[RMDB]
RNA sequence: GGGAACGACUCGAGUAGAGUCGAAAAUGGGCGUUAUCACAAGCUAGGAUGGAGGGAAUCAAAGUGGUACCGAAGAUAAUGUUACAAUUCCUAGACGAGGUAAAGGCGUCACCACGCACGAAAGAGAGACUACUCCUGCUUAUCGACGAGCUAGACAACUGCACAAAGAAUUCGUUCUUUGUGCAGUAAAAGAAACAACAACAACAAC
Reactivity to 2A3 in 0.01 (KOAc 150mM, MgCl2 10mM, bicine 150mM(pH8.5), 24C), signal-to-noise 4, nucleotides 027 to 156: u090g000g010g000c020g020u050u050a090u150c050a050c000a180a060g020c030u070a020g020g020a020u060g020g020a070g030g000g030a010a020u150c080a080a070a060g050u030g050g000u070a090c020c030g060a040a010g030a060u130a100a060u130g010u060u040a030c060a100a070u060u050c000c000u040a050g020a050c020g010a020g000g020u070a040a080a060g040g020c000g020u000c000a010c040c020a040c010g050c000a050c070g050a040a070a000g030a010g000a000g000a030c020u050a030c020u090c030c000u010g000c020u110u090a090u140c030g030a080c020g030a070g010c050u060a030g030a080c040a020
Reactivity to DMS in 0.01 (KOAc 150mM, MgCl2 10mM, bicine 150mM(pH8.5), 24C), signal-to-noise 3, nucleotides 027 to 156: u010g020g040g020c040g040u010u000a060u000c040a060c030a090a050g030c030u000a210g020g020a060u010g000g020a150g020g010g020a070a100u000c050a030a070a150g020u000g030g010u000a150c080c020g040a100a050g010a120u000a070a120u000g020u010u000a080c070a030a160u010u000c010c020u010a100g000a060c090g020a060g040g020u000a060a060a110g030g030c030g000u000c030a060c020c010a080c080g010c050a080c070g000a020a090a120g000a150g010a110g020a100c030u000a040c010u000c020c030u000g010c050u000u010a060u030c030g020a090c010g010a120g010c030u000a080g000a090c050a050

Chemical mapping of a 207-nucleotide RNA with 2A3 and DMS. It was measured as part of the RMDB library OK3TST. The 2A3 profile rests on 2,689 reads. 2A3 is a SHAPE reagent: it acylates the 2'-hydroxyl of flexible nucleotides of all four kinds. Reactivities are given for positions 27 through 156.